Source: RMDB library M2PK90, as collected in RNAgym. An RNA of 177 nucleotides, treated with DMS and 2A3 and read out base by base. For DMS the reverse transcriptase was MarathonRT. For 2A3 the reverse transcriptase was SuperScript II with manganese.
[RMDB]
RNA sequence: GGGAACGACUCGAGUAGAGUCGAAAAAUGAUUCGUAGUGUAAGACGAUCGACAGUCAUCGGUUGCCAGCAGGACCACCAAAGGAAUACGCUUCGGUAACUACUCGAGAUCCCAAGCGAUAAAACAAUUCUAAUCUGUUGUUCGCAACAGAUUAGAAAAAAGAAACAACAACAACAAC
Reactivity to DMS in 0.01 (KOAc 150mM, MgCl2 10mM, bicine 150mM(pH8.5), 24C), signal-to-noise 2, nucleotides 027 to 126: a090u010g000a080u000u020c010g010u000a070g010u000g010u020a110a160g010a040c030g000a040u010c000g000a060c080a090g020u020c120a180u000c030g000g020u000u020g000c030c010a130g010c050a060g000g000a130c110c030a040c060c050a000a080a100g020g000a090a050u000a070c110g000c120u000u000c040g020g000u020a070a100c000u000a010c010u000c000g000a020g000a100u000c000c000c000a120a100g030c210g000a100u030a030a040a050a110c200a080a090
Reactivity to 2A3 in 0.01 (KOAc 150mM, MgCl2 10mM, bicine 150mM(pH8.5), 24C), signal-to-noise 2, nucleotides 027 to 126: a000u070g030a030u060u030c040g020u040a060g050u030g030u150a080a070g050a050c000g000a030u000c020g030a060c000a030g110u110c040a040u040c020g000g050u050u040g010c020c010a030g050c010a020g010g110a010c040c020a010c010c020a180a060a010g110g040a070a060u050a070c070g000c020u020u020c010g000g000u080a090a150c010u010a020c000u000c020g010a000g000a020u010c010c000c010a010a020g070c030g060a050u170a220a120a010a010c050a020a060